An RNA of 177 nucleotides, treated with DMS and 2A3 and read out base by base. Values cover nucleotides 27 to 126. Conditions: 150 mM KOAc, 10 mM MgCl2 and 150 mM bicine (pH 8.5), 24 C. Source: RMDB library OK2TST, as collected in RNAgym. The DMS profile rests on 2,559 reads.
[RMDB]
RNA sequence: GGGAACGACUCGAGUAGAGUCGAAAAAAAGUGACCUCCGACCAGUUAGGGGCAAAGGGCGGAGCGGUCAUCCUGGCUGUGACCUUGACGCGUGCGCCGCUUCUGGUCCCACUGAGCGCGAUGCAAGGUAUCCUCAUACCUUCGGGUAUGAGGAUACAAAAGAAACAACAACAACAAC
Reactivity to DMS in 0.01 (KOAc 150mM, MgCl2 10mM, bicine 150mM(pH8.5), 24C), signal-to-noise 3, nucleotides 027 to 126: a040a050a080g010u000g000a190c060c040u000c040c050g010a070c010c010a040g000u000u000a100g040g010g010g000c020a040a110a080g000g000g000c000g020g000a140g010c210g020g010u010c030a030u000c060c070u010g010g050c130u010g020u010g010a060c010c000u000u010g000a140c130g010c020g030u000g030c250g020c000c010g010c010u000u010c030u010g000g000u000c010c050c030a060c050u010g000a130g000c040g010c090g020a080u010g030c110a110a110g000
Reactivity to 2A3 in 0.01 (KOAc 150mM, MgCl2 10mM, bicine 150mM(pH8.5), 24C), signal-to-noise 2, nucleotides 027 to 126: a000a000a000g090u030g030a060c010c030u000c000c020g070a090c040c010a010g020u140u150a070g020g000g000g040c020a070a180a070g060g070g010c000g000g000a030g030c020g010g010u040c000a020u080c020c140u050g050g000c090u090g070u150g200a180c000c000u000u040g080a020c040g030c080g140u040g010c050g000c020c000g080c000u210u070c010u030g010g000u000c000c000c010a040c030u060g000a030g000c020g020c100g050a040u110g040c020a050a010g090